[RMDB]
RNA sequence: GGGAACGACUCGAGUAGAGUCGAAAAUCGAGCGCUCUCCCGCCCCUCGGAUGGGCCGCUUCCGGCGAACGAGCCCGAAGAGCGAGUGGGGGAGAACUCCCGAGAGUUGGGAGACAGAAAGAGGGCGGUAGACCCUUCUUCGGAAGGGUCAAAAGAAACAACAACAACAAC
Reactivity to 2A3 in 0.01 (KOAc 150mM, MgCl2 10mM, bicine 150mM(pH8.5), 24C), signal-to-noise 9, nucleotides 027 to 129: u080c020g010a010g020c070g000c010u010c000u010c000c000c000g040c000c010c010c000u000c000g050g050a090u140g100g010g000c000c000g000c010u070u040c030c050g150g010c070g020a030a030c020g010a050g020c010c000c000g030a040a020g000a010g020c090g000a030g020u040g000g000g000g000g000a000g000a000a010c010u030c000c000c000g070a080g000a010g070u130u140g010g010g000a030g020a040c050a030g070a020a080a010g040a030g010g010g010c010g000g000u010a030
Reactivity to DMS in 0.01 (KOAc 150mM, MgCl2 10mM, bicine 150mM(pH8.5), 24C), signal-to-noise 9, nucleotides 027 to 129: u050c080g030a040g030c300g030c000u000c020u010c010c000c010g020c020c020c080c000u020c010g000g000a230u060g010g000g010c010c010g030c190u000u000c020c070g040g000c050g020a030a050c010g000a130g000c040c010c020g030a300a140g020a020g000c140g000a030g020u040g000g000g000g000g000a020g020a020a020c030u030c010c050c010g010a090g010a100g010u040u040g020g020g030a080g020a060c110a050g030a040a050a030g000a040g030g000g020c060g020g040u020a100